[RMDB]
Record summary: Conditions: 150 mM KOAc, 10 mM MgCl2 and 150 mM bicine (pH 8.5), 24 C. Chemical mapping of a 177-nucleotide RNA with 2A3 and DMS. The 2A3 profile rests on 3,302 reads.
RNA sequence: GGGAACGACUCGAGUAGAGUCGAAAAGCACUGCCUGCUUAUGGUGGCAACCCAUGUCAAUACCAUAGAAGCCGCGUUGGGUCGCGGAAAAUCUGUGAAACCGUAUAAUAGGGUAUGGGCAACGCAGCUAUAAUAUUUUAUUCGUAAAAUAUUAUAGAAAAGAAACAACAACAACAAC
Reactivity to 2A3 in 0.01 (KOAc 150mM, MgCl2 10mM, bicine 150mM(pH8.5), 24C), signal-to-noise 3, nucleotides 027 to 126: g020c010a000c090u020g010c010c010u010g020c000u100u070a030u070g030g000u020g020g000c000a030a110c010c000c000a010u030g040u040c030a060a060u030a120c000c000a000u000a060g050a040a000g060c010c000g010c010g020u020u050g110g050g150u080c000g000c000g000g000a010a040a000a000u000c000u010g010u000g020a080a020a020c000c010g010u020a060u020a070a180u100a060g050g000g000u020a000u010g000g000g000c010a040a000c010g010c000a000g000
Reactivity to DMS in 0.01 (KOAc 150mM, MgCl2 10mM, bicine 150mM(pH8.5), 24C), signal-to-noise 4, nucleotides 027 to 126: g020c120a090c080u000g010c010c010u000g000c040u030u010a030u000g000g000u000g020g010c030a050a110c020c020c010a110u000g020u030c060a100a060u020a070c020c010a020u000a020g020a120a160g000c000c020g000c010g010u010u010g020g020g010u020c000g020c010g010g000a030a020a030a010u020c010u000g010u000g000a120a100a110c050c060g000u000a070u020a090a100u040a090g010g000g010u010a020u000g010g000g000c060a050a100c090g020c040a020g010